[RMDB]
RNA sequence: GGGAACGACUCGAGUAGAGUCGAAAACCGUAUCGGUUCGCCGAUACGGAAAAGUUAAUGCUGCUAUCACACAUCUUAAGCAUGGCGGUGGUAUCGCUGGUGGGACUCCCCAGUUCGCUGGGGAGAAGUAUGAUAUGACAUUCGUGUCAUAUCAUACAAAAGAAACAACAACAACAAC
Reactivity to DMS in 0.01 (KOAc 150mM, MgCl2 10mM, bicine 150mM(pH8.5), 24C), signal-to-noise 9, nucleotides 027 to 126: c000c000g010u000a000u000c000g010g010u010u020c230g030c010c000g000a010u000a000c000g010g000a010a020a050a100g010u000u010a060a070u000g010c030u000g010c040u010a050u000c040a050c060a080c060a050u000c050u000u010a120a100g020c110a030u000g000g010c090g010g020u000g010g000u000a040u000c070g020c020u000g000g010u000g000g000g010a300c010u000c000c000c000c000a010g000u000u010c180g010c010u010g010g000g010g000a000g000a010a060
Reactivity to 2A3 in 0.01 (KOAc 150mM, MgCl2 10mM, bicine 150mM(pH8.5), 24C), signal-to-noise 8, nucleotides 027 to 126: c000c000g000u000a000u000c000g000g050u050u040c160g040c080c010g000a000u000a000c000g000g020a050a070a000a010g080u080u130a080a050u130g030c030u020g000c020u040a020u120c010a010c010a010c010a100u030c030u150u180a110a040g040c060a060u040g040g000c080g030g020u040g020g040u050a030u100c030g000c030u040g010g040u060g030g020g040a040c000u000c000c000c000c000a000g010u040u060c160g000c070u000g000g000g000g000a000g000a010a000

An RNA of 177 nucleotides, treated with DMS and 2A3 and read out base by base. It was measured as part of the RMDB library M2PK50. For 2A3 the reverse transcriptase was SuperScript II with manganese. DMS adducts were read by reverse transcription with MarathonRT. The DMS profile rests on 27,221 reads. The reactions ran in a buffer of 150 mM KOAc, 10 mM MgCl2 and 150 mM bicine (pH 8.5), at 24 C.